[RMDB]
RNA sequence: GGGAACGACUCGAGUAGAGUCGAAAAGAAGAAGAUGUAGCCCAUCACUUCGGCCUCCAGCGGAGGGGCGACUGCGGUAACAACGUCGUCUUGAGCGUCCGUGCGGAGGGUCAAGCAGGCUGUGCUAUACCUUAGCCUGUUUCGACAGGCUAAGGUAAAAAGAAACAACAACAACAAC
Reactivity to 2A3 in 0.01 (KOAc 150mM, MgCl2 10mM, bicine 150mM(pH8.5), 24C), signal-to-noise 6, nucleotides 027 to 126: g060a020a000g030a070a030g010a020u040g010u050a010g010c020c020c000a010u000c000a010c010u010u000c000g040g050c000c000u000c010c000a010g000c010g000g020a010g000g020g000g000c000g000a000c010u040g020c030g060g060u160a160a090c040a020a000c030g000u000c000g000u000c000u010u080g090a130g100c070g140u010c000c000g020u040g030c190g010g010a020g010g010g030u020c010a040a010g040c040a020g080g000c030u030g050u100g090c040u100a050
Reactivity to DMS in 0.01 (KOAc 150mM, MgCl2 10mM, bicine 150mM(pH8.5), 24C), signal-to-noise 6, nucleotides 027 to 126: g010a030a060g000a110a100g030a030u010g010u010a090g020c050c050c020a040u010c030a270c000u000u000c040g000g010c000c000u010c000c010a300g000c000g000g010a060g000g000g000g000c000g020a010c010u010g010c300g010g020u060a100a100c040a050a300c120g010u000c010g010u000c010u020u010g010a210g020c240g000u030c000c000g000u010g000c120g010g020a010g000g000g030u010c030a050a070g020c100a030g000g000c030u000g000u010g030c060u010a120
The record gives the reactivity of an RNA of 177 nucleotides to 2A3 and DMS. The reactions ran in a buffer of 150 mM KOAc, 10 mM MgCl2 and 150 mM bicine (pH 8.5), at 24 C. High 2A3 reactivity points to a flexible backbone, as in loops and unpaired stretches. For 2A3, 6,627 sequencing reads were counted. DMS adducts were read by reverse transcription with MarathonRT. Values cover nucleotides 27 to 126. 2A3 adducts were read by reverse transcription with SuperScript II with manganese.